[RMDB]
The record gives the reactivity of an RNA of 177 nucleotides to 2A3 and DMS. Conditions: 150 mM KOAc, 10 mM MgCl2 and 150 mM bicine (pH 8.5), 24 C. DMS adducts were read by reverse transcription with MarathonRT. For 2A3 the reverse transcriptase was SuperScript II with manganese. The 2A3 profile rests on 3,135 reads. It was measured as part of the RMDB library TTRINS.

RNA sequence: GGGAACGACUCGAGUAGAGUCGAAAAGAUAUGGAUAGCAUCGAUCGAUUGACACUAUGAAGGCUUUCAUAGGCUCGGAAACGAGCCUAUGAAAGCUGGAGUGUACAUCGGGAGCUAUCCUAAGUCACUAAUACGCAUAGUUCGCUAUGCGUAUUAGAAAAGAAACAACAACAACAAC
Reactivity to 2A3 in 0.01 (KOAc 150mM, MgCl2 10mM, bicine 150mM(pH8.5), 24C), signal-to-noise 2, nucleotides 027 to 126: g030a020u110a040u220g020g000a020u010a030g020c070a300u260c060g260a180u140c020g020a060u140u300g040a000c010a000c020u200a300u300g090a050a010g050g000c000u000u000u030c000a000u020a060g010g000c000u000c060g050g030a090a070a030c030g030a000g000c040c000u000a000u020g010a000a020a020g000c010u000g020g010a000g030u010g000u020a110c010a000u010c010g020g010g000a050g000c000u010a000u000c000c000u020a080a010g020u020c010a000
Reactivity to DMS in 0.01 (KOAc 150mM, MgCl2 10mM, bicine 150mM(pH8.5), 24C), signal-to-noise 5, nucleotides 027 to 126: g010a040u010a300u000g000g000a020u000a000g000c000a220u010c080g000a140u010c020g020a030u000u020g040a040c010a000c010u000a230u030g010a170a280g000g000c000u000u000u000c000a000u000a020g010g020c010u000c010g000g000a110a120a210c000g010a020g010c000c000u010a000u000g010a010a000a000g020c010u000g000g000a010g010u000g010u000a070c040a020u000c000g010g000g010a060g000c000u000a010u000c000c010u000a010a070g000u000c040a300